[RMDB]
RNA sequence: GGGAACGACUCGAGUAGAGUCGAAAAAUAAACCACCACCAGCGCGACCUGGUCCACCACGAGCUGGUCGGCGGCCUCGCGCGCUCCCGCCACCACCGCGACCACCUCCUCGCGCUGGUACAAAAAAGCAUAUUAAGGGUUUCGACCCUUAAUAUGCAAAAGAAACAACAACAACAAC
Reactivity to DMS in 0.01 (KOAc 150mM, MgCl2 10mM, bicine 150mM(pH8.5), 24C), signal-to-noise 2, nucleotides 027 to 126: a160u000a000a160a140c070c070a120c120c140a080c000c030a000g000c000g010c040g000a050c110c100u020g020g020u000c060c090a130c170c050a080c070g000a060g030c130u020g000g030u000c100g050g010c010g000g010c030c030u020c110g000c020g010c050g020c060u000c100c020c010g000c030c040a050c050c010a030c060c020g000c050g000a040c100c130a040c060c010u000c060c110u000c000g010c020g040c000u000g000g010u000a000c040a000a080a040a060a130a080
Reactivity to 2A3 in 0.01 (KOAc 150mM, MgCl2 10mM, bicine 150mM(pH8.5), 24C), signal-to-noise 1, nucleotides 027 to 126: a000u140a050a070a020c020c030a020c050c010a000c000c000a000g030c000g000c000g000a000c010c030u060g010g020u010c030c030a120c020c010a070c110g050a080g060c120u000g030g020u050c070g020g000c030g010g020c030c050u120c060g060c000g010c010g040c090u050c020c000c010g030c000c000a010c020c000a010c010c040g050c040g000a010c000c010a020c000c050u070c000c010u000c010g000c000g000c000u030g010g000u020a000c010a000a050a010a000a010a000

Source: RMDB library M2PK90, as collected in RNAgym. Chemical mapping of a 177-nucleotide RNA with DMS and 2A3. Conditions: 150 mM KOAc, 10 mM MgCl2 and 150 mM bicine (pH 8.5), 24 C. DMS adducts were read by reverse transcription with MarathonRT. For DMS, 1,005 sequencing reads were counted. High 2A3 reactivity points to a flexible backbone, as in loops and unpaired stretches.